[RMDB]
RNA sequence: GGGAACGACUCGAGUAGAGUCGAAAAAAAGGUAUACCUUCGCUUUUUAGAACAGCGAGGAUCUUAUGAGUUGAGCUUUUGUUAUUUGAGACUUUAUCUCGGGCUCCAUACAAUAUGUUCGUAGUAACAACUAACAGUGGUUCGCCACUGUUAGUUGAAAAGAAACAACAACAACAAC
Reactivity to 2A3 in 0.01 (KOAc 150mM, MgCl2 10mM, bicine 150mM(pH8.5), 24C), signal-to-noise 2, nucleotides 027 to 126: a000a000a050g060g000u120a110u070a270c010c000u030u070c010g030c010u200u120u040u060u300a110g020a050a030c010a050g000c000g000a000g030g000a010u010c010u060u170a070u140g080a060g120u080u050g060a030g000c000u000u110u080u050g140u100u100a160u110u100u030g100a060g000a000c000u000u070u050a110u110c010u040c000g000g010g000c000u000c000c000a050u130a090c040a060a140u120a080u270g030u000u090c070g020u100a060g020u030a070a050
Reactivity to DMS in 0.01 (KOAc 150mM, MgCl2 10mM, bicine 150mM(pH8.5), 24C), signal-to-noise 2, nucleotides 027 to 126: a090a020a060g000g010u010a160u000a280c050c020u000u000c040g020c000u010u000u000u040u010a170g000a090a100c260a010g020c000g010a050g000g020a050u010c070u000u010a070u020g020a100g010u010u010g010a070g020c020u000u010u000u000g010u000u020a110u000u000u010g000a300g000a020c020u000u000u000a030u040c010u000c020g010g000g000c020u000c030c080a060u000a070c130a090a050u010a070u010g030u000u010c080g000u010a060g010u000a080a110
Overview: Chemical mapping of a 177-nucleotide RNA with 2A3 and DMS. The RNA was probed in 150 mM KOAc, 10 mM MgCl2 and 150 mM bicine (pH 8.5) at 24 C. 2A3 adducts were read by reverse transcription with SuperScript II with manganese. Reactivities are given for positions 27 through 126.